[RMDB]
RNA sequence: GGGAACGACUCGAGUAGAGUCGAAAAGCCAGACGCGGUGGCACGUGCCUGUAGUCCCAGCUACUCGGGAGGCUGAGGCGGGAGGAUCGCUUGAGCCCAGGAGUUCUGGGCUGUAGUGCGCUAUGCCGAUCGGGUGUCCACACUAAGUUCGGCAUCACAGAUAGUUAGCGUUCGCGCUAACUAUCUGAAAAGAAACAACAACAACAAC
Reactivity to 2A3 in 0.01 (KOAc 150mM, MgCl2 10mM, bicine 150mM(pH8.5), 24C), signal-to-noise 2, nucleotides 027 to 156: g030c000c010a000g030a080c040g010c050g090g030u030g060g000c030a000c040g030u000g010c000c000u020g010u040a010g140u200c000c000c030a010g010c110u070a030c000u020c020g050g050g030a180g070g040c000u060g070a000g000g000c020g010g010g030a140g070g050a140u210c000g000c060u000u020g100a000g010c000c000c000a060g000g120a010g020u020u020c010u000g000g000g000c000u000g000u020a030g000u060g020c000g040c000u040a070u090g000c000c010g020a040u030c010g040g010g000u020g050u100c040c040a100c000a010c080u100a130a080g020u070u040c010g010g000c000a030u050c010a020